The data come from the RNA Mapping Database (RMDB), library OK3TST. Structure probing data (2A3 and DMS) for a 207-nucleotide construct. DMS (dimethyl sulfate) methylates the pairing face of unpaired adenines and cytosines.
RNA sequence: GGGAACGACUCGAGUAGAGUCGAAAAAAUGACCCAUGGCUGCUCAUCGCAUUUUCCAUCUAACAAGCUCGCUAUAGGGUGUUCCUGCAGAGUCAUAGUACCUGUAGGCGAAUAAGACAUGUAUUUUUGACUGCGCAUGCGCGGCCAACAGUGGCGGCGCUAUGUACAUCUUCGGAUGUACAUAGCGAAAAGAAACAACAACAACAAC
Reactivity to 2A3 in 0.01 (KOAc 150mM, MgCl2 10mM, bicine 150mM(pH8.5), 24C), signal-to-noise 5, nucleotides 027 to 156: a010a040u160g040a070c000c010c010a040u040g000g000c000u000g000c010u000c010a000u010c020g020c020a030u110u050u080u040c100c060a090u080c070u100a130a080c050a130a040g040c000u020c030g010c050u100a040u130a130g000g010g000u040g040u060u060c000c000u000g000c010a010g080a020g070u020c040a170u130a250g050u180a030c000c000u000g000u000a010g000g040c020g030a080a080u140a100a040g090a030c080a060u120g080u160a200u070u170u030u070u110g110a070c040u020g010c000g000c020a000u010g020c010g000c000g030g040c000c010a000a020c020a020g060u090g030g040c090g070g010
Reactivity to DMS in 0.01 (KOAc 150mM, MgCl2 10mM, bicine 150mM(pH8.5), 24C), signal-to-noise 3, nucleotides 027 to 156: a030a050u000g000a160c000c020c010a130u000g010g000c030u000g010c020u000c040a110u010c050g010c020a190u010u000u000u010c060c070a160u020c050u000a080a130c050a070a160g010c010u000c060g010c040u000a110u010a090g010g000g010u010g020u000u010c010c010u000g010c010a010g010a160g030u000c010a190u020a140g000u010a020c010c000u010g010u000a030g000g010c070g000a080a110u000a070a090g020a090c060a100u000g010u000a040u000u000u000u000u000g010a090c080u010g030c050g030c080a040u000g020c100g020c000g000g010c020c010a030a030c090a120g020u000g010g010c050g000g000
For 2A3, 2,910 sequencing reads were counted.